Record summary
Structure probing data (2A3) for a 207-nucleotide construct. 2A3 is a SHAPE reagent: it acylates the 2'-hydroxyl of flexible nucleotides of all four kinds. For 2A3 the reverse transcriptase was SuperScript II with manganese. Conditions: 150 mM KOAc, 10 mM MgCl2 and 150 mM bicine (pH 8.5), 24 C. For 2A3, 499 sequencing reads were counted.
RNA sequence: GGGAACGACUCGAGUAGAGUCGAAAAAGCCACCGCUACGGCGGUGGCAAGUAGAAAAGUUGGUGCUUAGACCACGCCCUCUACCGUCAUAAUAGAUAAAUAGGCGAGUAUCAGUACGCUGAUACAAAAAACACUCACACGUUCGCGUGUGAGUGAACAGACAGUUCGAGUUCGCUCGAACUGUCUGAAAAGAAACAACAACAACAAC
Reactivity to 2A3 in 0.01 (KOAc 150mM, MgCl2 10mM, bicine 150mM(pH8.5), 24C), signal-to-noise 1, nucleotides 027 to 156: a000g000c000c000a000c030c010g040c010u010a020c210g100g000c020g000g040u020g000g000c000a010a010g000u010a000g000a030a080a000a050g030u050u080g040g030u110g050c240u300u130a090g030a060c000c000a000c050g030c020c060c000u020c000u020a010c050c000g060u010c020a030u030a120a030u110a250g180a030u160a100a020a030u170a070g050g020c020g030a040g020u010a000u000c000a010g000u010a040c170g000c100u000g000a010u000a000c000a000a130a000a000a000a000c000a000c000u010c000a000c010a010c000g000u020u050c190g030c010g120u020g000u010g000a000g000u010g000a020a000